Structure probing data (2A3 and DMS) for a 207-nucleotide construct. The data come from the RNA Mapping Database (RMDB), library OK3TST. As a SHAPE reagent, 2A3 marks flexible, mostly unpaired nucleotides at the ribose 2'-OH. DMS adducts were read by reverse transcription with MarathonRT.
[RMDB]
RNA sequence: GGGAACGACUCGAGUAGAGUCGAAAACUGACUGAAGGCAGAUCACGCAGGGAAGUGGAGAGGAGUGGCCCGACACCUCCCCAAUGCCCUGCAGGCUGGUCUGGUGCACGCCAGGGGUCUCUGCUGGGGCAGGCUCGGUUGCCACCUGCCUGUGGGAUGAAAAUAUCACUUUCGAGUGAUAUUUUCAAAAAGAAACAACAACAACAAC
Reactivity to 2A3 in 0.01 (KOAc 150mM, MgCl2 10mM, bicine 150mM(pH8.5), 24C), signal-to-noise 3, nucleotides 027 to 156: c040u050g100a020c030u070g050a090a060g060g010c000a010g020a070u100c060a010c150g000c050a010g010g050g000a120a040g080u090g070g030a130g000a020g060g010a070g050u050g040g100c010c010c000g030a010c020a050c010c000u010c000c000c000c000a010a030u110g040c000c000c000u000g000c000a000g000g010c030u060g000g120u050c020u010g000g040u080g030c090a030c170g020c010c010a000g000g020g030g060u020c030u020c000u090g020c020u050g020g020g020g000c010a020g010g000c060u100c090g060g000u140u130g060c040c000a020c000c010u020g000c000c000u030g030u080g010g020g020a050
Reactivity to DMS in 0.01 (KOAc 150mM, MgCl2 10mM, bicine 150mM(pH8.5), 24C), signal-to-noise 2, nucleotides 027 to 156: c020u010g010a130c040u000g010a130a110g000g000c010a060g000a070u000c030a090c040g010c020a030g010g010g000a050a040g020u010g010g000a050g010a050g000g020a150g050u000g000g020c040c050c050g030a090c030a100c000c010u000c020c000c000c010a030a040u000g000c010c000c010u010g000c010a020g010g030c040u010g030g000u000c030u000g020g020u000g020c060a100c160g020c000c000a070g020g020g010g000u000c040u000c060u010g020c050u000g010g020g000g020c010a030g020g020c030u000c030g000g010u000u010g010c040c060a070c020c000u000g020c020c000u000g010u000g000g000g010a240